[RMDB]
Chemical mapping of a 177-nucleotide RNA with 2A3 and DMS. Source: RMDB libraries RFM100 and RFMREP, as collected in RNAgym. For 2A3 the reverse transcriptase was SuperScript II with manganese.
RNA sequence: GGGAACGACUCGAGUAGAGUCGAAAAGAAAGAAAGAAAAGCACUGCCCCCGGUGAGUCAGGGUGGGGCUGGCCCCCUGCUUCGCGCCCAUCCGCACUCUGACUCUCCACCUGCCUGCAGGAGCUAAUGAUCUUUAAUCGUUCGCGAUUAAAGAUCAAAAAGAAACAACAACAACAAC
Reactivity to 2A3 in 0.01 (KOAc 150mM, MgCl2 10mM, bicine 150mM(pH8.5), 24C), signal-to-noise 4, nucleotides 027 to 126: g140a010a050a000g140a040a110a000g100a020a150a010a000g030c000a010c020u030g020c000c000c000c000c040g000g010u030g000a010g000u000c000a000g010g030g000u000g020g110g000g020c020u010g010g000c000c020c000c000c040u060g050c030u110u140c110g020c010g010c040c000c010a020u010c000c030g150c050a000c000u000c000u000g000a000c000u000c000u000c010c000a020c000c010u050g020c000c020u020g000c010a010g030g050a050g020c020u050a050a130
Reactivity to DMS in 0.01 (KOAc 150mM, MgCl2 10mM, bicine 150mM(pH8.5), 24C), signal-to-noise 3, nucleotides 027 to 126: g010a050a050a130g010a120a100a080g000a080a110a080a070g000c020a050c020u000g000c000c020c030c020c100g020g000u020g020a010g000u000c010a000g010g020g030u000g010g000g000g010c130u000g010g020c070c010c020c030c040u020g020c030u020u010c060g010c080g020c090c010c010a020u000c000c000g000c020a000c000u000c000u000g010a050c000u000c000u010c030c000a070c060c030u000g000c030c030u010g020c040a020g030g000a140g040c000u000a110a170
Reactivities are given for positions 27 through 126. The 2A3 profile rests on 4,626 reads. The reactions ran in a buffer of 150 mM KOAc, 10 mM MgCl2 and 150 mM bicine (pH 8.5), at 24 C.